Source information:
The record gives the reactivity of an RNA of 177 nucleotides to DMS and 2A3. Values cover nucleotides 27 to 126. For 2A3, 1,916 sequencing reads were counted. The DMS profile rests on 1,979 reads.
[RMDB]
RNA sequence: GGGAACGACUCGAGUAGAGUCGAAAAGGGUUUGGAUUACAUCAAUAGUCACAUGAGCAGAAGUAAACAGAACAAGAAGUACUGCGGUUAUUCAAGAUCAAAGUUCACACUAUCGCAAUAAAUUGAACGUUAUACACCUGUUCGCAGGUGUAUAACGAAAAGAAACAACAACAACAAC
Reactivity to DMS in 0.01 (KOAc 150mM, MgCl2 10mM, bicine 150mM(pH8.5), 24C), signal-to-noise 3, nucleotides 027 to 126: g000g000g030u000u020u000g000g010a080u010u000a060c090a080u000c060a050a050u000a060g000u020c020a070c060a050u010g010a110g000c010a050g000a080a100g010u000a050a070a080c040a050g000a060a070c100a080a100g020a100a080g010u000a060c050u000g020c200g000g000u000u000a030u020u020c080a090a090g000a030u010c070a060a100a080g000u000u000c000a030c080a020c080u000a040u010c050g020c090a040a040u010a040a080a170u010u000g000a060a130
Reactivity to 2A3 in 0.01 (KOAc 150mM, MgCl2 10mM, bicine 150mM(pH8.5), 24C), signal-to-noise 2, nucleotides 027 to 126: g040g010g030u050u070u080g050g010a070u030u020a000c010a050u040c020a010a120u040a080g030u020c010a010c020a060u120g040a020g000c050a010g050a190a000g050u120a030a050a090c030a020g080a070a010c020a110a030g060a030a000g060u020a020c020u020g020c000g050g000u030u000a030u060u100c050a040a010g000a070u030c050a130a070a000g020u080u100c050a030c010a010c060u050a060u060c030g000c110a040a090u070a160a090a040u140u080g050a090a030